[RMDB]
RNA sequence: GGGAACGACUCGAGUAGAGUCGAAAAGUGUAGGAAGGCGUGAAGGUAACAUUGAAGAUUCAGUGUGAACUGGAUUGAAGUUGCCUUUAGUGCAGAUCUUGAUGGUAGUAGCAAAUAUUCAAAAGAACCAUCCUUACUUCUUCGGAAGUAAGGAUGGAAAAGAAACAACAACAACAAC
Reactivity to DMS in 0.01 (KOAc 150mM, MgCl2 10mM, bicine 150mM(pH8.5), 24C), signal-to-noise 3, nucleotides 027 to 126: g020u000g010u010a030g010g010a080a060g010g020c060g020u000g010a020a020g030g020u000a010a030c000a110u010u020g000a220a270g000a020u010u000c000a000g010u000g020u030g010a140a010c000u010g000g000a010u000u000g000a090a130g010u000u000g000c000c010u000u000u000a070g010u010g030c040a100g010a060u010c040u000u000g000a050u000g010g020u010a070g000u000a050g010c090a050a030a090u010a090u000u010c120a070a080a090a120g000a070a160
Reactivity to 2A3 in 0.01 (KOAc 150mM, MgCl2 10mM, bicine 150mM(pH8.5), 24C), signal-to-noise 2, nucleotides 027 to 126: g010u010g030u030a010g080g040a090a000g070g010c070g000u060g030a000a010g000g010u040a000a000c000a080u130u240g130a070a020g000a040u000u020c010a010g030u010g060u070g120a090a030c010u000g000g000a000u010u050g030a060a030g000u000u010g010c000c000u000u030u010a050g000u040g000c010a000g020a130u070c040u090u100g030a040u100g070g050u050a060g020u050a030g060c010a040a120a090u180a110u170u180c070a100a050a040a030g030a070a030
Structure probing data (DMS and 2A3) for a 177-nucleotide construct. As a SHAPE reagent, 2A3 marks flexible, mostly unpaired nucleotides at the ribose 2'-OH. In probing experiments dimethyl sulfate is read out at A N1 and C N3, which are open when not base-paired. The DMS profile rests on 2,062 reads.